[RMDB]
RNA sequence: GGGAACGACUCGAGUAGAGUCGAAAACAGGACGGAAAGACCCCGUGGAGCUUUACUGUAGCCUGAUAUUGAAUUUUGGUACAGCUUGUACAGGAUAGGUAGGAGCCUGAGAAGCCGGAGCGCUAGCAAUAAAGUCUGGGUUCGCCCAGACUUUAUUAAAAGAAACAACAACAACAAC
Reactivity to DMS in 0.01 (KOAc 150mM, MgCl2 10mM, bicine 150mM(pH8.5), 24C), signal-to-noise 1, nucleotides 027 to 126: c040a040g000g000a090c040g020g000a070a100a140g000a100c070c050c070c140g040u010g020g010a130g000c000u010u000u010a100c040u000g010u000a090g010c040c010u000g010a080u010a110u020u000g020a060a130u010u020u000u000g000g000u010a030c040a090g010c080u010u010g010u000a080c030a030g000g010a090u020a040g010g030u000a100g010g010a110g000c030c030u010g000a100g010a100a130g030c030c030g000g000a100g020c120g020c040u000a060g000c200